[RMDB]
RNA sequence: GGGAACGACUCGAGUAGAGUCGAAAAGAUAUGGACGCAUUCUCUAGCGUGGGCGAAGAACAGGGAUCCUUAUGUGUCGGAAACGACACAUUUCAUCCCUGGGAGCCUCGGGAUGCGUCCUAAGUCAAAGCUACAAUCUGUUCGCAGAUUGUAGCAACACGGUUAUAUGGUUCGCCAUAUAACCGUGAAAAGAAACAACAACAACAAC
Reactivity to 2A3 in 0.01 (KOAc 150mM, MgCl2 10mM, bicine 150mM(pH8.5), 24C), signal-to-noise 4, nucleotides 027 to 156: g000a000u030a010u060g000g000a010c010g000c010a040u260u060c090u040c070u160a070g070c130g270u300g050g000g000c010g250a300a020g000a010a010c000a000g000g000g010a020u070c040c010u040u010a010u000g000u000g000u000c000g010g000a010a010a010c000g000a000c000a000c000a000u000u040u040c070a000u000c000c000c000u000g000g000g000a000g000c000c020u020c010g000g000g000a000u000g010c000g010u000c000c000u000a000a000g000u000c020a060a030a050g000c000u000a000c000a000a000u010c000u010g060u080u150c300g020c080a000g000a000u000u000g010u000a010g000c000a000a000
Reactivity to DMS in 0.01 (KOAc 150mM, MgCl2 10mM, bicine 150mM(pH8.5), 24C), signal-to-noise 1, nucleotides 027 to 156: g000a070u010a220u010g110g030a080c010g000c020a070u000u000c000u010c040u000a160g050c120g000u020g010g070g060c030g000a150a160g020a140a210c030a000g030g020g000a020u010c140c010u010u000a030u010g030u000g030u000c000g030g000a080a040a260c010g010a050c000a000c000a000u000u000u000c010a030u000c020c030c000u000g000g000g000a210g000c000c010u000c000g030g000g000a000u000g000c020g010u000c000c020u000a000a100g010u010c050a070a100a100g010c000u000a010c000a050a000u010c000u000g070u000u010c300g050c020a000g010a010u000u010g010u010a020g010c050a000a020